[RMDB]
RNA sequence: GGGAACGACUCGAGUAGAGUCGAAAAGUUGUACGUCUGGUGGAUUCUGAAAAGGCAAGACCUGAUUGACAAAUAUACGAAACUAUAAGGAGGAAAUACUCAUGAGUUGCUACCAUUGCAAGUUUGCCAAAGAUUUUAAAGACAUGCCCCGUACAGGGGUGAUCUGUCUUUUCGAAGACAGAUCACCAAAAGAAACAACAACAACAAC
Reactivity to 2A3 in 0.01 (KOAc 150mM, MgCl2 10mM, bicine 150mM(pH8.5), 24C), signal-to-noise 1, nucleotides 027 to 156: g040u040u040g040u010a020c020g010u010c040u100g020g020u030g080g070a070u040u110c030u100g070a080a080a070a040g000g000c010a030a000g050a050c000c010u020g040a120u030u130g070a090c080a070a160a010u100a040u020a130c010g060a050a140a040c080u030a030u020a190a080g060g020a000g060g000a040a160a160u070a060c000u050c070a040u070g040a010g100u000u060g000c030u020a030c030c000a050u010u040g000c010a050a050g020u080u140u000g010c010c000a060a150a000g000a100u090u160u080u060a060a160a000g040a000c000a060u020g010c010c010c010c010g020u030a000c000a060g000g050
Reactivity to DMS in 0.01 (KOAc 150mM, MgCl2 10mM, bicine 150mM(pH8.5), 24C), signal-to-noise 1, nucleotides 027 to 156: g030u000u000g000u010a080c100g010u000c020u000g060g010u000g020g020a190u000u020c090u010g040a030a090a080a090g010g030c030a050a150g060a270c030c030u000g000a180u000u000g010a210c030a060a030a160u000a120u020a140c020g000a130a050a090c050u000a100u000a080a080g000g010a080g050g000a090a060a120u000a040c010u000c030a050u000g000a120g000u000u000g050c030u000a140c030c070a150u000u000g020c030a110a160g010u000u000u000g000c030c070a070a090a070g020a080u010u010u000u010a080a090a090g010a040c040a080u020g000c020c010c040c010g000u000a080c060a120g010g020
An RNA of 207 nucleotides, treated with 2A3 and DMS and read out base by base. The reactions ran in a buffer of 150 mM KOAc, 10 mM MgCl2 and 150 mM bicine (pH 8.5), at 24 C. High DMS reactivity at an A or C suggests that its Watson-Crick edge is free. 2A3 adducts were read by reverse transcription with SuperScript II with manganese.